[RMDB]
RNA sequence: GGGAACGACUCGAGUAGAGUCGAAAAUACGAGAGGACCGGGGUGGACGGACCUCCGGUGAACCGGUUGUCGACCAACGGCAUGGCCGGGUAGCCGCGUCCGGCGCGGAUAACCGCUGAAGGCAUCUACCUUUGUCUAAAUUCGUUUAGACAAAGGUAAAAGAAACAACAACAACAAC
Reactivity to 2A3 in 0.01 (KOAc 150mM, MgCl2 10mM, bicine 150mM(pH8.5), 24C), signal-to-noise 9, nucleotides 027 to 126: u170a020c050g010a010g010a030g050g020a020c010c020g000g000g020g070u060g020g030a020c010g000g010a020c000c010u010c010c010g000g000u050g040a080a030c000c000g000g000u040u010g010u010c020g020a200c060c070a200a110c020g010g010c020a050u090g120g000c000c000g010g000g010u020a010g000c000c000g010c010g010u010c010c000g020g020c030g000c010g010g010a050u110a150a110c010c010g000c040u040g050a040a010g030g010c010a040u020c020u010
Reactivity to DMS in 0.01 (KOAc 150mM, MgCl2 10mM, bicine 150mM(pH8.5), 24C), signal-to-noise 6, nucleotides 027 to 126: u030a090c090g010a080g010a100g010g010a110c050c030g000g020g000g040u000g010g010a060c040g000g010a070c020c020u020c060c010g010g020u000g000a120a300c020c010g000g000u000u000g020u000c020g000a150c190c240a100a170c020g010g000c020a060u070g010g010c000c010g000g000g010u020a300g000c000c000g000c100g000u000c030c020g000g000c060g030c020g000g000a100u030a080a080c020c020g000c040u010g000a110a100g000g000c090a100u010c070u000
The record gives the reactivity of an RNA of 177 nucleotides to 2A3 and DMS.
The reactions ran in a buffer of 150 mM KOAc, 10 mM MgCl2 and 150 mM bicine (pH 8.5), at 24 C.